[RMDB]
Structure probing data (2A3 and DMS) for a 207-nucleotide construct.
Reactivities are given for positions 27 through 156.
The reactions ran in a buffer of 150 mM KOAc, 10 mM MgCl2 and 150 mM bicine (pH 8.5), at 24 C.
The 2A3 profile rests on 2,400 reads.
The data come from the RNA Mapping Database (RMDB), library OK3TST.

RNA sequence: GGGAACGACUCGAGUAGAGUCGAAAACUCGCGCGAACAUCGAGGCGUGGAGCGCGACAUGAAUCAGCCUCUAUUAGAUUAAUGGUCGACAGAUCAGCGGCGAUCAGCGACCGAAUUAGAAGCCGCCACCGGAAGAGGAGACGCUCGACGGACGUCAAGUACUAUUACUGUUCGCAGUAAUAGUACUAAAAGAAACAACAACAACAAC
Reactivity to 2A3 in 0.01 (KOAc 150mM, MgCl2 10mM, bicine 150mM(pH8.5), 24C), signal-to-noise 4, nucleotides 027 to 156: c010u020c010g030c010g000c010g090a230a040c020a070u080c070g010a010g000g050c020g010u040g000g020a030g000c000g000c000g020a030c040a150u300g120a110a120u110c040a030g010c010c000u000c010u040a130u090u140a050g070a120u080u150a120a130u170g000g000u010c000g010a060c050a100g020a020u010c030a030g040c000g040g000c020g000a010u000c030a010g010c000g000a000c000c010g010a040a020u110u030a070g030a100a000g010c020c030g020c000c010a030c000c030g050g010a070a020g020a040g040g060a030g030a040c060g030c050u010c030g070a040c020g000g040a040c020g030u020c020a030
Reactivity to DMS in 0.01 (KOAc 150mM, MgCl2 10mM, bicine 150mM(pH8.5), 24C), signal-to-noise 2, nucleotides 027 to 156: c030u010c000g000c030g020c020g000a130a100c050a080u000c050g020a110g010g020c040g040u010g010g020a290g000c030g040c000g030a090c080a060u000g010a200a170u000c040a080g000c000c000u010c020u000a130u000u010a140g010a170u010u020a100a130u010g010g000u020c000g000a140c070a180g000a070u000c040a080g010c050g030g020c050g000a060u000c030a180g010c040g010a070c010c000g000a030a040u000u000a100g000a050a100g010c010c020g040c020c020a220c020c000g060g000a040a090g000a100g030g020a250g010a030c020g000c010u000c030g010a090c070g020g000a030c000g000u000c030a120